Chemical mapping of a 207-nucleotide RNA with DMS and 2A3. The RNA was probed in 150 mM KOAc, 10 mM MgCl2 and 150 mM bicine (pH 8.5) at 24 C. Source: RMDB library OK3TST, as collected in RNAgym. The 2A3 profile rests on 2,635 reads. For DMS the reverse transcriptase was MarathonRT.
RNA sequence: GGGAACGACUCGAGUAGAGUCGAAAACGUGUCUUGUCAGCUUGGUUCAAUGGAGACACAUGAUCGGGAAUUGGGCUUGGUUCGAGUUUGCCAGCUCGAUAUGCGGCAUCAGGAAUAUACUGUUGGAGAUUUUCGGCAGUAUCCGUCGCGGAGAUCACAAUUUACAAGCUUUCGAGCUUGUAAAUUGAAAAGAAACAACAACAACAAC
Reactivity to DMS in 0.01 (KOAc 150mM, MgCl2 10mM, bicine 150mM(pH8.5), 24C), signal-to-noise 2, nucleotides 027 to 156: c080g000u010g020u010c010u000u000g020u000c020a120g010c070u020u020g030g020u000u000c030a100a140u030g020g010a090g020a060c030a070c010a120u000g010a050u000c030g010g040g010a110a090u000u000g020g000g030c010u000u010g090g010u010u000c060g000a110g020u000u000u010g000c020c030a120g010c010u000c020g000a020u000a060u000g020c000g000g000c030a070u000c140a190g000g000a130a160u000a080u000a040c030u000g020u000u010g030g010a080g020a260u010u010u010u000c010g030g000c010a010g010u000a020u000c040c030g010u000c020g040c040g020g010a220g000a060u000c020a180
Reactivity to 2A3 in 0.01 (KOAc 150mM, MgCl2 10mM, bicine 150mM(pH8.5), 24C), signal-to-noise 5, nucleotides 027 to 156: c060g000u000g010u010c010u040u140g150u160c060a050g060c100u150u210g110g040u280u120c070a080a070u200g060g000a020g000a000c000a000c000a030u060g010a020u020c020g000g000g150a070a100u010u040g030g020g000c060u080u140g040g030u070u130c080g020a060g060u040u080u080g030c000c000a000g000c010u000c010g000a010u040a040u110g000c000g010g000c010a040u080c100a160g070g060a140a020u170a000u000a110c000u010g010u040u040g150g060a190g080a300u280u140u080u090c010g020g000c000a000g010u010a010u030c010c020g010u010c000g000c010g010g040a060g000a020u020c010a000